[RMDB]
RNA sequence: GGGAACGACUCGAGUAGAGUCGAAAAGAUAUGGAUGGCUGUCUUGUGUGGUGAGGGAGUGCUAACUAUCGGAAACGAUAGAGCACUUUGAUCUCACGUAACAUCACAAGACAGCCAUCCUAAGUCAGCACAUCAAAAAGUUCGCUUUUUGAUGUGCAAAAGAAACAACAACAACAAC
Reactivity to DMS in 0.01 (KOAc 150mM, MgCl2 10mM, bicine 150mM(pH8.5), 24C), signal-to-noise 1, nucleotides 027 to 126: g010a030u000a300u010g010g020a010u010g010g040c010u000g000u000c000u000u000g090u000g050u000g050g040u010g020a010g010g000g000a000g020u000g000c000u000a150a160c000u030a010u000c000g010g010a140a130a210c010g020a010u000a000g010a040g010c000a000c000u000u000u000g000a100u000c000u000c000a000c000g060u000a050a110c210a100u000c000a020c040a010a000g000a030c000a000g000c010c000a020u000c000c000u000a020a130g020u000c050a170